The record gives the reactivity of an RNA of 170 nucleotides to 2A3 and DMS. The 2A3 profile rests on 5,473 reads. Values cover nucleotides 27 to 129. Values are in units of 0.01, from 0 to 300, in steps of 10. Conditions: 150 mM KOAc, 10 mM MgCl2 and 150 mM bicine (pH 8.5), 24 C. For DMS, 8,803 sequencing reads were counted.
RNA sequence: GGGAACGACUCGAGUAGAGUCGAAAAAGAAGGACGCGAGACGGUGAACCUGUGAGUGGAAGCCCGCUUUAUUCACUGGGGUCGACAGCUCUGGGGAGAAAAGGGAGGAUCGGAUGGGAAGAGUAUAAACCAGCAAGCUUCGGCUUGCUGAAAAGAAACAACAACAACAAC
Reactivity to 2A3 in 0.01 (KOAc 150mM, MgCl2 10mM, bicine 150mM(pH8.5), 24C), signal-to-noise 3, nucleotides 027 to 129: a010g080a000a000g030g010a020c000g040c060g060a050g050a050c050g050g040u050g010a010a020c020c000u070g030u060g060a030g010u040g000g000a020a010g030c020c000c010g050c000u110u160u040a130u130u140c070a040c080u040g000g010g060g000u090c040g030a030c010a000g020c020u030c030u060g000g000g000g000a070g000a000a020a010a030g000g000g000a010g010g010a000u000c030g020g000a010u030g020g000g010a020a010g020a030g060u080a030u060a210a080a040c070
Reactivity to DMS in 0.01 (KOAc 150mM, MgCl2 10mM, bicine 150mM(pH8.5), 24C), signal-to-noise 5, nucleotides 027 to 129: a060g030a070a090g080g020a090c100g030c250g020a070g020a080c090g000g010u000g010a060a060c110c070u040g070u030g020a020g030u040g030g020a000a000g030c060c020c080g030c050u030u010u010a100u010u060c080a050c060u060g020g020g060g020u040c070g040a150c150a090g040c050u020c030u010g040g020g050g010a030g030a040a040a080a040g010g010g030a070g080g000a020u030c000g040g030a110u050g050g030g000a060a040g040a090g030u040a070u000a080a180a120c130